[RMDB]
RNA sequence: GGGAACGACUCGAGUAGAGUCGAAAAGACAUGAACUGCAGUGCAGGUCAGUUGCUUGCCAGUGCCGCCUCCCGGCGUCUGGUCACGCAGACCGCCCGGACAGGCUCCAUCGGCGUCAUGAUGGCUCAGCAGUGUUGUGGUUCGCCACAACACUGCUAAAAGAAACAACAACAACAAC
Reactivity to DMS in 0.01 (KOAc 150mM, MgCl2 10mM, bicine 150mM(pH8.5), 24C), signal-to-noise 1, nucleotides 027 to 126: g010a060c070a120u010g000a070a080c040u000g000c060a120g000u020g040c060a060g000g010u000c000a140g000u020u020g000c060u000u000g010c040c090a040g020u000g000c060c020g020c060c030u000c040c070c070g020g030c070g020u010c010u000g000g000u000c260a190c300g000c020a030g010a030c140c060g020c050c020c080g010g010a080c220a070g000g010c020u000c280c010a010u000c040g020g000c040g040u010c020a040u010g000a090u010g000g030c130u020c090